Structure probing data (DMS and 2A3) for a 177-nucleotide construct. High DMS reactivity at an A or C suggests that its Watson-Crick edge is free. Reactivities are given for positions 27 through 126. DMS adducts were read by reverse transcription with MarathonRT. High 2A3 reactivity points to a flexible backbone, as in loops and unpaired stretches. The reactions ran in a buffer of 150 mM KOAc, 10 mM MgCl2 and 150 mM bicine (pH 8.5), at 24 C.

RNA sequence: GGGAACGACUCGAGUAGAGUCGAAAAUGUGCUCGCUUGACCCGUCUGAUGUGCUGCCGUGGGCACUUGACUGAGAGUGGCAGAGCACUAGGCUAACCCAAAGUGACACAUGCCUGGCGGGAUGUUCAAGCCCGCAUCAGUUCGCUGAUGCGGGCUUAAAAGAAACAACAACAACAAC
Reactivity to DMS in 0.01 (KOAc 150mM, MgCl2 10mM, bicine 150mM(pH8.5), 24C), signal-to-noise 1, nucleotides 027 to 126: u020g010u000g000c020u000c000g030c010u090u120g040a080c020c000c070g050u010c010u000g110a200u000g010u020g020c010u000g020c020c040g060u000g000g060g000c040a000c040u000u000g000a100c020u010g000a110g050a040g000u010g000g040c000a200g000a010g010c040a000c040u000a080g000g000c140u040a140a240c040c000c000a160a140a160g040u050g000a070c050a100c150a000u010g010c010c000u000g000g000c040g000g000g000a130u010g030u020u010c180
Reactivity to 2A3 in 0.01 (KOAc 150mM, MgCl2 10mM, bicine 150mM(pH8.5), 24C), signal-to-noise 2, nucleotides 027 to 126: u150g000u020g000c040u000c000g020c040u060u170g170a150c000c030c000g030u000c000u030g270a200u220g030u010g000c000u000g000c020c060g060u130g000g010g010c010a000c030u030u000g010a000c020u020g040a010g040a030g140u090g010g030c030a050g030a010g000c040a000c000u070a010g020g020c030u030a100a170c000c000c050a080a000a000g030u040g040a020c000a000c000a100u060g030c000c000u000g000g020c000g030g020g000a070u040g040u070u060c000